[RMDB]
RNA sequence: GGGAACGACUCGAGUAGAGUCGAAAACGAUGAACGUGUACGCGAUGGAUGACGAAACAUUGCUAGACGAUUAAGUCCAAAUGAAACAUCAUCUGAAAUUUAAUUUAAUAACCCUUCUAAUUUUUAGCGAGUAUGAGUACUUCGGUACUCAUACUCGAAAAGAAACAACAACAACAAC
Reactivity to 2A3 in 0.01 (KOAc 150mM, MgCl2 10mM, bicine 150mM(pH8.5), 24C), signal-to-noise 3, nucleotides 027 to 126: c050g020a020u110g030a100a040c030g000u020g070u160a070c090g000c010g020a040u020g070g030a010u080g080a070c050g120a220a010a000c010a010u000u000g050c040u050a030g010a020c020g080a110u050u260a080a020g010u000c010c020a010a020a150u140g020a020a040a040c010a010u040c000a000u000c000u060g050a060a020a020u240u240u060a080a130u050u050u160a080a180u170a040a050c000c020c000u080u040c050u040a090a300u140u140u010u100u160a090g060
Reactivity to DMS in 0.01 (KOAc 150mM, MgCl2 10mM, bicine 150mM(pH8.5), 24C), signal-to-noise 1, nucleotides 027 to 126: c170g000a110u000g020a000a000c080g000u000g000u000a170c300g000c000g010a020u000g000g000a240u000g090a110c210g040a170a180a080c000a010u000u070g000c090u020a030g000a000c060g000a210u010u020a050a090g090u020c050c010a050a090a040u020g010a080a050a030c130a110u020c110a000u000c000u000g000a070a070a090u010u000u000a000a010u000u000u000a080a060u100a020a060c020c010c020u000u000c020u090a180a120u000u050u090u000u030a100g000

Structure probing data (2A3 and DMS) for a 177-nucleotide construct. The DMS profile rests on 930 reads. Reactivities are rounded to 0.1 and cut off at 0 and 3. For 2A3, 1,519 sequencing reads were counted. 2A3 is a SHAPE reagent: it acylates the 2'-hydroxyl of flexible nucleotides of all four kinds. The RNA was probed in 150 mM KOAc, 10 mM MgCl2 and 150 mM bicine (pH 8.5) at 24 C.